Description
An RNA of 207 nucleotides, treated with 2A3 and read out base by base. The reactions ran in a buffer of 150 mM KOAc, 10 mM MgCl2 and 150 mM bicine (pH 8.5), at 24 C. For 2A3, 946 sequencing reads were counted. It was measured as part of the RMDB library OK3TST.
[RMDB]
RNA sequence: GGGAACGACUCGAGUAGAGUCGAAAAGGUCGGCUGCCGGCUCGAUCAGUGCCUCGAGGGCCACGACCGUCCGCGGCUGCCGCUCCGAUCCGACGAUGUCGAUUUCGAUGCCUCUUGGCGCGUCGAUCGUCGCGACCGACUCCGCGGAAAGCUCCGCUGUUUCACUACGGUUCGCCGUAGUGAAACAAAAAGAAACAACAACAACAAC
Reactivity to 2A3 in 0.01 (KOAc 150mM, MgCl2 10mM, bicine 150mM(pH8.5), 24C), signal-to-noise 1, nucleotides 027 to 156: g020g000u000c000g020g030c070u070g000c100c030g140g040c050u040c030g010a070u060c110a040g110u000g000c030c000u030c070g030a180g040g030g050c020c030a030c000g000a000c010c000g000u010c000c010g050c020g000g020c080u130g030c060c030g000c000u040c010c010g000a070u030c070c050g000a000c000g010a090u250g030u050c010g060a070u070u260u140c200g030a050u210g020c000c020u130c000u130u230g020g000c020g010c010g060u050c040g010a020u030c050g030u000c000g000c040g030a040c000c010g040a120c050u000c000c000g000c020g020g000a120a060a030g060c080u040c000c010g040c010